[RMDB]
RNA sequence: GGGAACGACUCGAGUAGAGUCGAAAAGACCCUGCGUUGCUAGUGCCGAGCGAGAAAUGCUCGCGACGUUGCCAAAUUGCGGGGAAGACCUCUUUAUUGCGCGGGUUACCAAGCACGGCGGCCGUGCGUCCGUUUUUUAGGAUAAAGCACGCGCCGACACAUAGAGAGUGUUCGCACUCUCUAUGUGAAAAGAAACAACAACAACAAC
Reactivity to DMS in 0.01 (KOAc 150mM, MgCl2 10mM, bicine 150mM(pH8.5), 24C), signal-to-noise 1, nucleotides 027 to 156: g020a150c010c000c010u000g000c060g010u000u010g000c020u000a090g020u010g030c070c000g040a190g040c000g000a120g020a130a170a150u010g030c000u000c020g040c010g030a080c050g000u000u000g010c080c080a060a090a110u020u000g060c010g020g000g040g010a130a130g000a130c030c010u000c070u000u000u010a110u040u010g010c010g000c080g000g010g030u010u000a150c020c050a100a150g000c070a060c100g000g010c020g050g010c040c010g000u010g010c010g000u000c000c000g000u000u000u000u000u000u000a100g000g030a010u000a030a080a130g000c010a040c010g020c030g000c010c000g000a130
Reactivity to 2A3 in 0.01 (KOAc 150mM, MgCl2 10mM, bicine 150mM(pH8.5), 24C), signal-to-noise 4, nucleotides 027 to 156: g070a010c000c000c020u020g000c010g020u020u020g010c050u060a070g020u010g210c040c010g000a010g000c020g030a070g130a110a220a080u300g050c010u000c010g010c050g040a030c000g130u100u130g010c010c020a070a060a120u130u280g010c010g000g000g000g030a010a020g110a040c010c010u060c040u060u060u130a120u080u150g020c030g020c020g000g030g020u060u040a080c030c020a070a020g020c040a010c050g040g000c000g000g030c110c040g010u000g010c010g000u000c000c000g060u060u040u030u030u170u300a050g000g000a010u030a100a210a020g000c000a000c000g000c020g000c000c000g000a000